Background: Structure probing data (2A3) for a 207-nucleotide construct. 2A3 adducts were read by reverse transcription with SuperScript II with manganese. The 2A3 profile rests on 1,004 reads. The data come from the RNA Mapping Database (RMDB), library M2RFOK. The reactions ran in a buffer of 150 mM KOAc, 10 mM MgCl2 and 150 mM bicine (pH 8.5), at 24 C.
[RMDB]
RNA sequence: GGGAACGACUCGAGUAGAGUCGAAAAUGGGCUACCAGUAAGCGAAAAAUGAUAAAGGACGAAAAAAACAUAAUUCGAGAUUUUUCAGGAUGGAUUUUUUUAGGUAUCUAUCAAAACUAUUCUGAUGCAACGUAGAGCACGUUCGCGUGCUCUACAACGCAGGUAAUAUCUUCGGAUAUUACCUGCGAAAAGAAACAACAACAACAAC
Reactivity to 2A3 in 0.01 (KOAc 150mM, MgCl2 10mM, bicine 150mM(pH8.5), 24C), signal-to-noise 2, nucleotides 027 to 156: u040g030g040g020c030u020a060c030c000a030g060u020a010a060g000c060g010a100a050a050a000a070u110g080a110u150a080a080a030g060g000a020c030g040a030a030a000a000a000a150a030c050a040u120a140a070u140u110c040g010a010g000a180u150u140u010u160u090c000a000g030g000a000u010g050g030a090u000u000u000u000u000u020u030a000g060g000u130a110u260c010u000a000u010c000a010a020a000a000c000u000a020u010u000c020u040g000a010u040g050c030a080a070c100g000u020a000g000a000g000c000a010c010g070u030u030c130g040c000g070u000g010c000u000c000u010a000c000a000a010